[RMDB]
RNA sequence: GGGAACGACUCGAGUAGAGUCGAAAAAGUUGCGUCUAAAUCAUUCUUGAUCACCAUUGGUGACCGUUCAAUUACAGGUAUGGUUGCACGUGACCAAAUGGUUGGUCGUUGGCAGAUUCCUGUUGCACUCCACGUAAUGAUUCGUCAUUACGUGGAGAAAAGAAACAACAACAACAAC
Reactivity to 2A3 in 0.01 (KOAc 150mM, MgCl2 10mM, bicine 150mM(pH8.5), 24C), signal-to-noise 3, nucleotides 027 to 126: a000g130u080u040g000c010g000u020c030u140a100a080a090u080c030a070u160u040c030u090u120g020a040u030c010a000c010c000a100u020u190g040g000u020g040a070c020c020g000u020u040c020a050a060u110u050a160c040a070g000g160u230a100u100g060g000u030u000g000c040a030c060g010u030g040a010c000c000a010a000a140u120g040g020u080u040g000g000u010c010g010u050u110g020g010c010a000g010a110u020u020c000c000u010g100u070u070g000c060a040
Reactivity to DMS in 0.01 (KOAc 150mM, MgCl2 10mM, bicine 150mM(pH8.5), 24C), signal-to-noise 5, nucleotides 027 to 126: a090g010u000u000g010c030g020u000c040u000a030a060a060u010c040a050u000u000c120u010u010g000a030u000c010a020c000c090a140u010u000g010g010u000g000a060c100c040g010u000u000c030a060a090u010u000a140c220a100g000g030u000a070u010g000g010u010u000g000c070a060c130g010u020g010a060c020c000a020a020a030u000g020g010u000u000g010g000u000c010g020u000u000g020g010c110a050g000a200u000u000c010c020u000g010u000u000g020c120a210
The record gives the reactivity of an RNA of 177 nucleotides to 2A3 and DMS. DMS adducts were read by reverse transcription with MarathonRT. Conditions: 150 mM KOAc, 10 mM MgCl2 and 150 mM bicine (pH 8.5), 24 C. For 2A3, 3,814 sequencing reads were counted.